[RMDB]
RNA sequence: GGGAACGACUCGAGUAGAGUCGAAAACAUGGUAUGGCCUCGCAUCCGGCCUACCCACAGAAUCAACAACUUAGGAUGCGGUGGGCGAGAGCCCUAAGAAGGAGUCUCCGCGCCUGGGGAGCUCCGUAUGACUUAAUGUAUUACCAGGCGCAUACAACCUGAUACGUAUGUUCGCAUACGUAUCAGGAAAAGAAACAACAACAACAAC
Reactivity to 2A3 in 0.01 (KOAc 150mM, MgCl2 10mM, bicine 150mM(pH8.5), 24C), signal-to-noise 2, nucleotides 027 to 156: c080a080u080g000g000u060a080u260g000g030c010c030u030c050g000c000a000u020c000c000g000g000c000c000u010a000c020c060c000a120c040a070g160a030a050u210c060a010a180c030a030a020c050u150u260a040g000g000a000u000g000c000g000g040u040g010g000g000c000g000a080g020a000g000c030c000c000u000a030a020g030a000a140g040g000a010g000u090c000u010c050c000g050c000g000c000c000u000g000g000g000g000a020g030c010u080c000c020g000u050a120u080g040a020c020u070u160a140a090u300g100u200a180u220u080a100c010c010a000g010g020c000g000c000a000u050a050c060a050a000